Annotation: Structure probing data (DMS and 2A3) for a 177-nucleotide construct. The data come from the RNA Mapping Database (RMDB), library TTRDES. Conditions: 150 mM KOAc, 10 mM MgCl2 and 150 mM bicine (pH 8.5), 24 C.

[RMDB]
RNA sequence: GGGAACGACUCGAGUAGAGUCGAAAAGAUAUGGACGAGGACGACAUGCUCUGCGUCGGAAACGACGUAAAGAGCAACAGCGUCUCGUCCUAAGUCAAACGGAUACGCUCUUCGGAGCGUAUCCGAACAUCUCACAGAUCUUCGGAUCUGUGAGAUGAAAAGAAACAACAACAACAAC
Reactivity to DMS in 0.01 (KOAc 150mM, MgCl2 10mM, bicine 150mM(pH8.5), 24C), signal-to-noise 3, nucleotides 027 to 126: g010a020u000a270u000g010g000a020c010g000a090g010g010a030c000g010a040c090a240u010g010c010u010c010u000g010c010g010u010c000g000g000a070a070a120c000g020a010c010g040u000a030a090a050g000a010g020c000a090a080c180a190g000c000g010u000c000u000c000g020u010c000c000u000a000a060g000u010c020a090a170a260c000g020g000a010u000a010c020g010c000u000c010u000u000c290g010g030a000g000c000g000u000a000u000c010c000g000a030a140
Reactivity to 2A3 in 0.01 (KOAc 150mM, MgCl2 10mM, bicine 150mM(pH8.5), 24C), signal-to-noise 3, nucleotides 027 to 126: g010a000u040a020u090g000g000a000c010g020a050g260g100a030c020g050a080c090a220u300g000c020u000c000u000g010c000g030u010c000g000g010a040a030a010c010g020a000c020g020u070a070a300a090g000a000g000c020a030a050c060a030g000c000g020u010c000u000c000g020u000c000c000u000a030a000g000u020c040a070a080a130c010g000g000a000u000a000c000g020c010u000c000u100u200c300g030g000a000g000c000g000u000a020u000c000c000g010a000a000